Structure probing data (2A3 and DMS) for a 177-nucleotide construct. For 2A3, 706 sequencing reads were counted. Conditions: 150 mM KOAc, 10 mM MgCl2 and 150 mM bicine (pH 8.5), 24 C. The data come from the RNA Mapping Database (RMDB), library OK2TRN. For DMS the reverse transcriptase was MarathonRT. Reactivities are given for positions 27 through 126.
RNA sequence: GGGAACGACUCGAGUAGAGUCGAAAACAUCAUCAACCCAGACCUGUACUAACGCGGGCUCUGUGCCUUUAUUAUUCGUGCGUACAUUGACUUCUUUCUGAGCCGCUGGGAAUAUCACACGUGUACCCUAGGGUGAGGUUUUCGAACCUCACCCUAGAAAAGAAACAACAACAACAAC
Reactivity to 2A3 in 0.01 (KOAc 150mM, MgCl2 10mM, bicine 150mM(pH8.5), 24C), signal-to-noise 1, nucleotides 027 to 126: c010a100u170c000a020u080c010a000a170c020c010c000a000g010a020c020c000u040g030u060a040c040u050a040a080c060g020c080g110g040g060c030u000c050u120g100u130g000c010c020u190u190u060a190u270u100a050u080u240c090g000u020g070c100g000u020a000c010a040u010u170g120a060c020u010u090c010u070u180u090c150u100g010a020g080c020c000g080c030u060g020g020g040a050a000u030a000u090c020a050c030a040c180g020u060g030u040a070c010c010
Reactivity to DMS in 0.01 (KOAc 150mM, MgCl2 10mM, bicine 150mM(pH8.5), 24C), signal-to-noise 1, nucleotides 027 to 126: c050a060u020c110a040u020c100a130a110c000c050c010a060g000a110c180c060u000g010u000a080c070u010a120a030c060g100c300g010g030g000c000u000c180u030g040u010g020c040c010u000u000u000a070u030u000a120u000u000c040g020u000g030c080g000u000a050c040a040u000u010g040a060c060u000u000c070u010u000u000c110u000g010a130g000c020c030g040c020u000g000g000g000a110a120u000a060u000c070a040c130a040c080g020u000g000u000a100c050c050